[RMDB]
RNA sequence: GGGAACGACUCGAGUAGAGUCGAAAAUGAGGCUGCUAUCAAUACAACUCGAUUGACAACCAAACGAGAAUACCCAUCUUCUGGAUCCUGUCAGAGAAUGGCAGUUUGUCUCAUGGGAGCAGCAAUCAAGAUAACAUUUCUUCGGAAAUGUUAUCUUAAAAGAAACAACAACAACAAC
Reactivity to 2A3 in 0.01 (KOAc 150mM, MgCl2 10mM, bicine 150mM(pH8.5), 24C), signal-to-noise 6, nucleotides 027 to 126: u120g010a030g170g000c000u000g010c000u020a030u150c050a090a050u070a220c050a110a090c070u020c050g060a080u000u070g040a080c060a110a100c170c000a040a040a000c030g000a000g020a100a030u100a130c010c010c010a020u030c030u210u020c060u060g050g010a050u060c030c010u050g030u040c010a000g040a010g100a280a110u030g000g000c010a040g030u050u120u120g030u000c010u000c030a030u060g010g020g010a030g000c000a000g000c020a010a050u090c030
Reactivity to DMS in 0.01 (KOAc 150mM, MgCl2 10mM, bicine 150mM(pH8.5), 24C), signal-to-noise 8, nucleotides 027 to 126: u010g010a090g020g020c000u000g010c010u000a180u000c050a060a080u000a080c180a080a140c040u000c050g000a110u000u000g010a130c170a110a170c180c010a020a040a100c100g000a020g010a090a060u000a260c210c010c010a040u000c040u000u010c050u000g000g000a050u000c210c060u000g000u010c010a020g000a080g010a040a030u000g010g010c060a050g010u000u000u000g010u000c040u000c100a080u000g000g000g000a030g010c010a010g010c020a110a110u000c120

An RNA of 177 nucleotides, treated with 2A3 and DMS and read out base by base. The 2A3 profile rests on 8,359 reads. DMS adducts were read by reverse transcription with MarathonRT. It was measured as part of the RMDB library OK2TRN.